[RMDB]
Description: The data come from the RNA Mapping Database (RMDB), library OK1LIB. Structure probing data (DMS and 2A3) for a 177-nucleotide construct. For 2A3 the reverse transcriptase was SuperScript II with manganese. The reactions ran in a buffer of 150 mM KOAc, 10 mM MgCl2 and 150 mM bicine (pH 8.5), at 24 C.
RNA sequence: GGGAACGACUCGAGUAGAGUCGAAAAUCGGCCGGGCGGCCUAUUACGGUUAGUUGAGAAGCUAGCGUAUCAAUCGGAAAUUAGAUUCUAUAUGGUUACGUGCGAUAGAUUACGCGUUUCGGCAGAAGGGUAUUAUAAACUUCGGUUUAUAAUACCCAAAAGAAACAACAACAACAAC
Reactivity to DMS in 0.01 (KOAc 150mM, MgCl2 10mM, bicine 150mM(pH8.5), 24C), signal-to-noise 4, nucleotides 027 to 126: u030c070g010g010c000c010g010g010g010c060g040g000c080c020u000a030u020u020a080c110g010g010u010u010a110g030u030u000g000a140g010a190a130g000c010u000a040g020c000g010u010a040u010c070a080a100u010c070g000g010a070a140a100u050u040a080g010a120u020u020c070u010a080u030a080u030g000g000u010u000a030c170g020u000g000c040g000a020u010a040g000a050u020u020a020c030g010c040g000u000u020u000c080g020g010c050a060g010a080a040
Reactivity to 2A3 in 0.01 (KOAc 150mM, MgCl2 10mM, bicine 150mM(pH8.5), 24C), signal-to-noise 3, nucleotides 027 to 126: u040c040g060g020c030c010g090g020g020c020g010g100c010c000u020a030u000u120a090c070g030g000u010u030a040g040u030u100g090a060g030a160a010g000c020u020a020g030c000g000u000a000u100c040a020a030u060c040g080g010a010a080a070u120u030a120g060a150u020u020c020u070a110u070a120u300g090g000u060u080a030c060g040u020g070c000g010a000u010a020g050a030u000u140a030c030g000c020g010u020u020u070c010g030g000c030a000g010a120a150